[RMDB]
RNA sequence: GGGAACGACUCGAGUAGAGUCGAAAAAGGUGCAGGACCACGAGUGCUUUGUCACCGCUUGAUUUUAGGCUUGGCAUAGAAUGGCUGGGGUAUCUCGCCCCCGUAAACUGCGACGGGAAGCCACAGCUGACGACUGUGUUUUCGAACACAGUCGUCAAAAAGAAACAACAACAACAAC
Reactivity to DMS in 0.01 (KOAc 150mM, MgCl2 10mM, bicine 150mM(pH8.5), 24C), signal-to-noise 3, nucleotides 027 to 126: a070g030g010u000g010c040a050g020g000a090c040c070a070c130g020a140g010u000g010c020u000u020u000g020u010c020a040c080c080g020c160u010u020g000a100u010u000u000u030a100g010g010c030u020u000g000g020c040a040u010a070g010a090a070u000g040g010c020u000g010g010g000g000u000a100u000c030u000c010g010c040c000c010c020c050g010u000a030a100a130c090u010g000c080g020a010c000g000g020g020a030a300g010c010c020a030c070a080g020c060
Reactivity to 2A3 in 0.01 (KOAc 150mM, MgCl2 10mM, bicine 150mM(pH8.5), 24C), signal-to-noise 1, nucleotides 027 to 126: a000g060g000u020g000c020a000g060g090a050c000c000a040c140g050a150g040u060g040c000u160u120u120g080u140c010a000c010c000g000c000u070u110g060a210u130u140u070u300a060g030g000c000u030u060g030g030c030a050u020a080g100a030a090u050g040g000c010u000g050g000g000g030u100a060u020c080u020c000g020c010c030c020c000c010g010u040a020a000a190c070u060g080c000g000a040c020g000g040g000a020a020g040c020c000a040c000a020g030c080

Chemical mapping of a 177-nucleotide RNA with DMS and 2A3. Reactivities are rounded to 0.1 and cut off at 0 and 3. The 2A3 profile rests on 1,255 reads. For DMS the reverse transcriptase was MarathonRT. The data come from the RNA Mapping Database (RMDB), library OK2TST. The DMS profile rests on 1,786 reads.